[RMDB]
RNA sequence: GGGAACGACUCGAGUAGAGUCGAAAAGAACACACGAAGCCACGCGUCGGAAGAAAGAGCGAAAAGGGAUUUGGAGGAAAACUCAACUAGUGGCGAGCUCGAAAGCUCCGAGAAAGCGAGUGUGGAAGGGUAACAAUUACUUCGGUAAUUGUUACCCAAAAGAAACAACAACAACAAC
Reactivity to DMS in 0.01 (KOAc 150mM, MgCl2 10mM, bicine 150mM(pH8.5), 24C), signal-to-noise 2, nucleotides 027 to 126: g010a130a120c000a030c050a020c000g010a210a150g000c010c040a180c130g040c070g000u000c000g000g020a100a040g020a020a080a190g000a040g000c000g010a010a070a080a080g000g010g000a060u000u010u060g030g000a060g000g000a090a040a100a130c020u020c020a070a070c050u000a050g020u040g010g000c100g000a170g010c000u000c040g020a090a000a070g000c020u000c040c010g000a000g010a120a140a080g040c010g000a080g020u000g000u020g010g000a130a060
Reactivity to 2A3 in 0.01 (KOAc 150mM, MgCl2 10mM, bicine 150mM(pH8.5), 24C), signal-to-noise 3, nucleotides 027 to 126: g020a010a000c020a000c000a000c010g090a070a040g030c020c000a080c060g100c040g130u030c010g080g070a100a020g060a090a090a000g090a010g030c030g060a030a050a020a020g090g020g060a100u120u120u150g180g010a130g020g030a050a020a160a120c000u020c050a020a030c110u090a050g030u030g070g000c020g000a020g010c000u030c020g030a080a000a010g000c000u020c000c000g020a030g060a030a040a000g060c030g010a060g030u000g000u000g040g010a120a120

An RNA of 177 nucleotides, treated with DMS and 2A3 and read out base by base. The reactions ran in a buffer of 150 mM KOAc, 10 mM MgCl2 and 150 mM bicine (pH 8.5), at 24 C. DMS adducts were read by reverse transcription with MarathonRT. The DMS profile rests on 2,754 reads. Reactivities are given for positions 27 through 126.